[RMDB]
RNA sequence: GGGAACGACUCGAGUAGAGUCGAAAAGGGCGGCAUGAGUUUGUUUACGCCGAUGCCAACCGAAGGUAUUAAGCGACUGAAUCAGCUUUAUCGUCAGCCGACUAUCGAAAACCUGAAGCUGAUGAUGCGGUGACAUCAUUUUCGAAUGAUGUCACCGAAAAGAAACAACAACAACAAC
Reactivity to DMS in 0.01 (KOAc 150mM, MgCl2 10mM, bicine 150mM(pH8.5), 24C), signal-to-noise 2, nucleotides 027 to 126: g010g010g010c220g000g100c050a090u010g030a070g010u030u000u020g010u010u000u000a090c110g020c010c070g010a010u000g000c020c020a100a280c140c060g020a060a150g000g020u000a030u000u020a120a050g010c000g000a110c110u000g000a160a070u000c060a100g000c040u000u000u010a010u010c060g000u000c020a060g010c080c040g040a170c140u000a120u000c140g000a080a040a060a180c100c070u010g010a070a080g000c020u000g000a020u010g000a170u000g000
Reactivity to 2A3 in 0.01 (KOAc 150mM, MgCl2 10mM, bicine 150mM(pH8.5), 24C), signal-to-noise 1, nucleotides 027 to 126: g050g000g000c040g030g010c050a030u160g050a050g100u060u110u140g220u060u130u030a030c070g080c010c000g000a000u050g000c010c000a060a020c000c100g100a060a020g050g000u010a040u100u160a050a000g030c030g060a050c040u110g090a060a010u030c010a010g070c000u030u050u000a030u040c090g030u030c010a030g010c030c050g090a050c000u070a090u280c010g080a050a000a080a150c010c050u090g010a010a000g050c010u000g000a000u000g010a010u110g000